This 177-nucleotide RNA was probed chemically with DMS.
[RMDB]
RNA sequence: GGGAACGACUCGAGUAGAGUCGAAAACGACAGCUUUUCGAAGCUGUCGAUUGGCAAAGGCUAGGACCGGCCAGACAAAGGUCCGUUAGCAAAUCGUAACGAAGCUCGCCUGCUUCGGCAGGCGAAAUAGGGAUCUACGAUUCGUCGUAGAUCCCUAAAAAGAAACAACAACAACAAC
Reactivity to DMS in 0.01 (KOAc 150mM, MgCl2 10mM, bicine 150mM(pH8.5), 24C), signal-to-noise 2, nucleotides 027 to 126: c020g010a000c000a010g000c000u000u020u000u030c220g010a010a030g000c000u000g000u000c000g000a040u000u010g020g050c110a160a160a160g000g050c010u010a140g000g000a020c010c010g010g020c010c000a200g010a090c280a050a070a140g000g020u000c000c010g020u000u010a030g000c030a050a040a070u000c090g020u030a030a050c140g020a050a080g030c130u010c010g010c010c000u000g000c000u000u000c190g040g020c000a010g000g020c000g000a000a050a010
Conditions: 150 mM KOAc, 10 mM MgCl2 and 150 mM bicine (pH 8.5), 24 C.
It was measured as part of the RMDB library M2PK50.
For DMS, 1,058 sequencing reads were counted.